[RMDB]
The record gives the reactivity of an RNA of 177 nucleotides to 2A3 and DMS. The DMS profile rests on 5,421 reads. It was measured as part of the RMDB library OK2TRN. The reactions ran in a buffer of 150 mM KOAc, 10 mM MgCl2 and 150 mM bicine (pH 8.5), at 24 C.
RNA sequence: GGGAACGACUCGAGUAGAGUCGAAAAAGUUGGAGGAGCUCUGGUCCGCCCGCAAGUUUCGCGCCGAUCUCAUACUGCGUUUGCGCUACUUUGAGCGUGACGCCAGAUUGCUGUCCGUGCAAAUGGAAUAUCAAUCAUCCUUCGGGAUGAUUGAUAUAAAAGAAACAACAACAACAAC
Reactivity to 2A3 in 0.01 (KOAc 150mM, MgCl2 10mM, bicine 150mM(pH8.5), 24C), signal-to-noise 2, nucleotides 027 to 126: a000g110u100u030g010g020a060g050g000a010g040c040u020c060u130g030g050u030c020c020g000c010c020c020g010c080a070a020g030u060u050u110c040g030c010g000c020c020g020a050u000c020u030c070a070u130a190c030u020g000c030g050u070u120u220g000c000g020c020u080a100c070u170u170u300g100a000g000c020g020u040g010a000c000g000c020c000a050g050a130u030u180g000c010u020g040u000c000c030g070u030g070c030a020a070a120u070g040g040a060
Reactivity to DMS in 0.01 (KOAc 150mM, MgCl2 10mM, bicine 150mM(pH8.5), 24C), signal-to-noise 4, nucleotides 027 to 126: a080g000u000u000g000g010a130g010g010a100g010c050u000c050u000g020g010u010c040c050g010c050c030c030g000c120a090a070g000u000u010u010c070g000c060g020c060c030g000a050u010c070u000c070a090u010a190c060u000g010c030g010u010u000u010g010c000g020c000u000a090c210u000u020u010g010a030g010c000g020u000g010a010c030g010c060c120a030g010a210u010u000g000c060u010g010u000c020c050g020u000g010c100a030a070a060u010g000g000a150